[RMDB]
RNA sequence: GGGAACGACUCGAGUAGAGUCGAAAAAGCGUAGCGGUACGCCGCUACGCAAGGCGCAUUUGAACUGUACUGUACGCCUUGCAUAAAGCAAAAGUACUAAAAAAACGUGCCGUUACGACGGCACGAAAAAACAUCCAUUGGUUCGCCAAUGGAUGAACACAUGUCGCUAGUUCGCUAGCGACAUGUGAAAAGAAACAACAACAACAAC
Reactivity to 2A3 in 0.01 (KOAc 150mM, MgCl2 10mM, bicine 150mM(pH8.5), 24C), signal-to-noise 2, nucleotides 027 to 156: a010g060c000g030u000a000g000c020g000g000u050a050c290g060c010c000g010c000u000a000c000g000c000a000a000g010g000c010g000c020a120u040u130u230g180a180a100c160u130g040u070a010c000u020g010u060a030c010g000c030c050u000u060g000c040a050u130a250a220a030g030c050a050a000a000a030g010u040a040c070u180a020a180a010a000a000a000a000c020g020u030g000c050c020g000u000u050a070c300g040a000c000g080g000c000a000c000g000a050a040a000a000a000a000c000a000u010c010c000a000u000u020g010g030u010u010c130g000c090c000a000a000u000g000g020a000u000g000a020a000
This 207-nucleotide RNA was probed chemically with 2A3. Conditions: 150 mM KOAc, 10 mM MgCl2 and 150 mM bicine (pH 8.5), 24 C. 2A3 adducts were read by reverse transcription with SuperScript II with manganese.